Structure probing data (2A3 and DMS) for a 207-nucleotide construct. Conditions: 150 mM KOAc, 10 mM MgCl2 and 150 mM bicine (pH 8.5), 24 C. It was measured as part of the RMDB library M2RFPK. The DMS profile rests on 6,875 reads.
RNA sequence: GGGAACGACUCGAGUAGAGUCGAAAAGAGUUCGGUUGGAGCGACAAGUAUUUAGCUUGAGAUAGCUACAUCACCUCGGUAUGAUUAGGGUGAGACCUAGGAACCGUAGGGGUAUUCUCAAAGGAAGGUUACCGAACAACCUUCGGGUUGUUCGGAAGAUGUUGUUAAGGUUCGCCUUAACAACAUCAAAAGAAACAACAACAACAAC
Reactivity to 2A3 in 0.01 (KOAc 150mM, MgCl2 10mM, bicine 150mM(pH8.5), 24C), signal-to-noise 5, nucleotides 027 to 156: g050a000g010u050u080c040g020g030u050u070g040g010a030g010c030g040a040c030a050a020g050u080a110u070u160u080a030g010c000u020u010g010a020g000a060u110a050g030c030u060a040c010a080u060c030a030c000c010u020c030g000g020u230a190u220g040a100u070u070a020g030g000g000u050g090a060g040a030c000c010u010a020g000g030a020a030c020c010g020u060a040g000g020g010g000u020a080u100u070c060u020c010a070a100a010g080g020a030a020g020g040u080u100a040c000c000g000a010a000c000a000a000c000c000u030u050c120g050g000g000u010u010g000u000u000c000g000g000a000a000
Reactivity to DMS in 0.01 (KOAc 150mM, MgCl2 10mM, bicine 150mM(pH8.5), 24C), signal-to-noise 3, nucleotides 027 to 156: g000a060g020u000u000c020g020g030u000u000g010g010a060g040c010g010a150c030a000a090g010u010a070u010u000u000a090g020c020u000u000g010a140g040a140u000a060g010c050u010a020c060a100u000c030a070c030c010u000c020g020g050u020a090u010g020a240u000u010a040g020g010g010u010g010a230g010a150c010c010u010a080g010g010a090a060c030c040g000u010a050g000g000g000g020u000a050u000u000c030u000c030a060a090a130g000g010a060a060g020g020u000u010a170c010c000g010a020a030c020a000a020c000c000u000u010c300g020g010g020u000u000g000u000u000c000g010g010a010a040